[RMDB]
RNA sequence: GGGAACGACUCGAGUAGAGUCGAAAAGUUCGUACCGUGAGGCGUCCUGUUAAGUCAGGCAACGAGCGAGACCCAUUUCCACUGUUGCUAACGACUCCGCGAGGAGGGCGAGUACACUGUGGAGACCCCAUUGGACAGCGUUCGCGCUGUCCAAUGGAAAAGAAACAACAACAACAAC
Reactivity to 2A3 in 0.01 (KOAc 150mM, MgCl2 10mM, bicine 150mM(pH8.5), 24C), signal-to-noise 4, nucleotides 027 to 126: g000u000u010c000g010u050a140c050c070g020u110g040a100g080g050c080g020u160c010c010u040g030u040u100a200a250g300u070c010a000g000g000c030a010a010c020g010a000g010c000g020a030g090a160c000c010c020a060u050u040u000c000c000a010c030u010g040u080u080g030c010u000a020a000c000g000a000c000u010c000c010g030c060g040a060g000g010a000g000g010g000c000g000a000g000u000a030c040a000c190u040g000u000g010g000a000g010a000c000c000
Reactivity to DMS in 0.01 (KOAc 150mM, MgCl2 10mM, bicine 150mM(pH8.5), 24C), signal-to-noise 2, nucleotides 027 to 126: g000u010u010c010g030u040a300c000c030g020u030g000a120g000g020c100g020u130c010c030u010g030u000u010a050a010g000u020c040a030g000g030c160a300a060c010g000a000g000c050g000a220g000a200c010c000c000a300u000u010u000c000c000a000c000u040g000u000u000g000c000u000a090a000c000g000a090c000u000c000c040g020c300g000a170g040g000a030g000g000g020c010g000a000g000u000a000c170a000c060u000g000u010g000g010a060g020a010c170c110
Conditions: 150 mM KOAc, 10 mM MgCl2 and 150 mM bicine (pH 8.5), 24 C. An RNA of 177 nucleotides, treated with 2A3 and DMS and read out base by base. Source: RMDB library RFM100, as collected in RNAgym. For DMS the reverse transcriptase was MarathonRT. Reactivities are given for positions 27 through 126.